[RMDB]
RNA sequence: GGGAACGACUCGAGUAGAGUCGAAAAACGAUGCGCCGUUGCAGGCUGUCGGCGAGGAACUGGGCGAAGUAGGGGCUGCGCGCCAGGCCGCCGUCGAUGGACAGGCGGUCGGUGACCUUCAGGUAGACCUAAAAUCGUGAUUCGUCACGAUUUUAGGAAAAGAAACAACAACAACAAC
Reactivity to 2A3 in 0.01 (KOAc 150mM, MgCl2 10mM, bicine 150mM(pH8.5), 24C), signal-to-noise 3, nucleotides 027 to 126: a000c030g000a030u160g100c030g000c040c030g080u110u170g090c080a060g060g050c010u010g030u010c010g000g040c020g010a040g000g000a050a180c050u050g010g010g000c030g020a050a010g030u120a070g010g020g020g000c020u030g000c030g000c020g060c030c000a030g030g010c010c000g030c040c000g000u020c000g050a150u180g070g000a020c050a070g000g000c000g000g000u010c010g000g000u010g020a060c010c000u060u060c030a030g020g130u100a040g110a110
Reactivity to DMS in 0.01 (KOAc 150mM, MgCl2 10mM, bicine 150mM(pH8.5), 24C), signal-to-noise 4, nucleotides 027 to 126: a090c070g020a040u000g010c080g020c010c010g000u010u020g010c150a100g010g000c030u000g030u000c030g020g010c030g000a160g000g010a080a100c070u000g010g000g000c030g000a060a050g020u000a100g000g000g000g010c040u000g030c090g010c030g000c000c010a140g010g000c020c000g010c040c000g010u000c010g010a120u010g000g000a020c030a110g020g010c000g000g010u000c010g010g020u000g000a130c050c040u000u000c090a070g000g000u000a100g000a190
Structure probing data (2A3 and DMS) for a 177-nucleotide construct. Conditions: 150 mM KOAc, 10 mM MgCl2 and 150 mM bicine (pH 8.5), 24 C. It was measured as part of the RMDB library OK2TST. DMS adducts were read by reverse transcription with MarathonRT. For DMS, 7,435 sequencing reads were counted. Reactivities are rounded to 0.1 and cut off at 0 and 3.